[RMDB]
RNA sequence: GGGAACGACUCGAGUAGAGUCGAAAAAUACAACGUGAUCAAGACUUGGUUUGGUCGCACGGUUAUUCGUUCUUCGUAUAAACUCUUUUACGAGGCGGCACAAGCCAUUGUUAAUGGCGACGAAAAACUCUACGCUCGCUUUCGAGCGAGCGUAGAGAAAAGAAACAACAACAACAAC
Reactivity to 2A3 in 0.01 (KOAc 150mM, MgCl2 10mM, bicine 150mM(pH8.5), 24C), signal-to-noise 1, nucleotides 027 to 126: a000u300a110c110a130a030c020g020u110g000a250u060c130a000a110g130a080c000u110u000g100g050u050u050u090g000g000u000c000g000c020a020c030g150g020u000u100a020u000u010c000g030u000u090c000u160u000c000g050u030a020u000a170a190a110c300u130c000u170u070u050u000a110c050g000a000g080g020c000g090g000c000a000c060a230a000g000c000c000a000u000u080g300u000u200a050a190u140g100g000c000g020a000c000g130a000a000a000a270a000
Chemical mapping of a 177-nucleotide RNA with 2A3. For 2A3, 299 sequencing reads were counted. The RNA was probed in 150 mM KOAc, 10 mM MgCl2 and 150 mM bicine (pH 8.5) at 24 C. It was measured as part of the RMDB library OK1LIB.